[RMDB]
RNA sequence: GGGAACGACUCGAGUAGAGUCGAAAAUGCGCUGAUCAGGAACCUGGCUGUGAUUUCGCCGCCCGGGUCCGUUUGCACCCGCCACAGGCUGUGCUCGUCAUCGAACUCGGCGGCAAGCACCUUGGUGCGUCUAAGCUUCCUUCGGGAAGCUUAGACGAAAAGAAACAACAACAACAAC
Reactivity to 2A3 in 0.01 (KOAc 150mM, MgCl2 10mM, bicine 150mM(pH8.5), 24C), signal-to-noise 3, nucleotides 027 to 126: u100g000c030g010c040u070g020a080u080c060a050g090g020a040a050c020c010u030g020g010c020u040g050u060g160a300u010u190u220c050g000c000c020g030c070c040c000g000g010g000u000c010c010g010u050u040u070g000c010a010c000c030c060g010c040c030a290c090a130g090g000c040u060g020u060g050c040u040c030g150u060c040a110u050c040g020a050a050c050u020c070g010g010c000g000g000c020a000a000g000c010a030c020c010u050u070g060g000u080g040
Reactivity to DMS in 0.01 (KOAc 150mM, MgCl2 10mM, bicine 150mM(pH8.5), 24C), signal-to-noise 3, nucleotides 027 to 126: u000g000c060g020c050u000g010a100u000c080a080g010g020a120a080c030c010u000g000g010c100u010g000u000g000a170u000u000u010c140g010c010c000g000c100c040c050g000g000g000u010c020c000g010u010u000u000g020c110a050c020c040c110g000c070c030a070c140a110g020g030c150u000g020u000g010c010u010c100g000u010c080a050u000c020g010a050a060c090u000c010g020g000c010g000g010c010a040a020g000c010a020c020c080u000u000g030g020u010g000
Chemical mapping of a 177-nucleotide RNA with 2A3 and DMS. 2A3 adducts were read by reverse transcription with SuperScript II with manganese. The data come from the RNA Mapping Database (RMDB), library OK2TST. Values cover nucleotides 27 to 126.